[RMDB]
Structure probing data (DMS and 2A3) for a 177-nucleotide construct. For DMS, 1,826 sequencing reads were counted. It was measured as part of the RMDB library OK2TST.

RNA sequence: GGGAACGACUCGAGUAGAGUCGAAAAAUAUCCUCUAACUCCAUACUGCACAAGUAAUCACACCAAGCAUGAGGAAUAUGUGGCUUAACUUCCUCAUCGUACGCCACGUUGCCCUGUAAGAGGACUGGUACCACGGAUAGUUCGCUAUCCGUGGUACAAAAGAAACAACAACAACAAC
Reactivity to DMS in 0.01 (KOAc 150mM, MgCl2 10mM, bicine 150mM(pH8.5), 24C), signal-to-noise 3, nucleotides 027 to 126: a090u000a140u000c010c010u010c090u020a100a120c080u010c050c010a050u030a090c090u010g010c040a080c140a080a060g010u000a050a160u020c080a050c100a050c030c030a050a170g000c050a030u000g000a030g020g000a060a060u000a120u000g030u000g000g000c040u000u000a040a120c230u000u000c020c030u000c020a030u000c120g000u000a070c120g000c000c010a020c040g010u010u000g050c040c000c010u000g000u000a100a050g010a060g020g000a040c260u000g010
Reactivity to 2A3 in 0.01 (KOAc 150mM, MgCl2 10mM, bicine 150mM(pH8.5), 24C), signal-to-noise 2, nucleotides 027 to 126: a000u060a050u000c000c020u000c030u020a080a050c010u000c010c000a020u080a170c010u070g040c030a050c030a100a110g020u070a120a070u100c010a020c040a010c060c060a010a010g020c000a050u040g040a040g020g080a020a010u130a060u070g040u010g000g000c030u090u070a070a060c010u080u070c020c010u020c010a050u040c030g040u060a010c040g000c020c010a000c030g020u040u050g070c000c020c000u050g050u080a060a000g030a010g020g020a010c000u030g050

Conditions: 150 mM KOAc, 10 mM MgCl2 and 150 mM bicine (pH 8.5), 24 C. In probing experiments dimethyl sulfate is read out at A N1 and C N3, which are open when not base-paired. Values cover nucleotides 27 to 126. For 2A3, 2,068 sequencing reads were counted.